This 170-nucleotide RNA was probed chemically with DMS and 2A3. Reactivities are rounded to 0.1 and cut off at 0 and 3.
RNA sequence: GGGAACGACUCGAGUAGAGUCGAAAAGAUACGGCAUGCUUGCUCUGCUAUAAGAGGAACCGACUUACUAGAGUUGAAGCUUCUACCGUUGUCUGUGGUGGAAAACGUACGUUUUAUAUCACAGCAAAUACAAACCAGUUCGCUGGUUUGAAAAGAAACAACAACAACAAC
Reactivity to DMS in 0.01 (KOAc 150mM, MgCl2 10mM, bicine 150mM(pH8.5), 24C), signal-to-noise 9, nucleotides 027 to 129: g010a080u000a010c080g010g030c090a040u030g010c030u030u000g010c010u020c030u020g000c090u030a130u010a100a080g020a100g000g010a070a100c170c010g000a020c000u030u020a010c060u020a050g020a030g000u000u000g020a080a120g030c040u000u010c020u040a140c080c080g000u050u000g030u030c030u010g000u030g020g020u000g020g000a050a010a000a010c000g000u040a070c190g010u020u000u000u020a070u010a010u000c000a020c010a020g010c110a030a050a080u080a130
Reactivity to 2A3 in 0.01 (KOAc 150mM, MgCl2 10mM, bicine 150mM(pH8.5), 24C), signal-to-noise 9, nucleotides 027 to 129: g070a000u140a060c030g010g010c080a040u140g010c020u050u060g020c000u010c010u040g020c050u100a050u040a240a060g050a020g080g040a030a050c080c030g030a020c030u020u040a040c020u030a010g010a010g020u020u110g110a080a000g020c000u080u020c020u090a080c030c030g030u020u030g060u030c010u000g000u000g020g000u030g030g040a010a010a000a010c060g160u300a040c110g000u060u000u000u000a040u000a000u010c000a000c000a000g010c020a000a010a040u230a050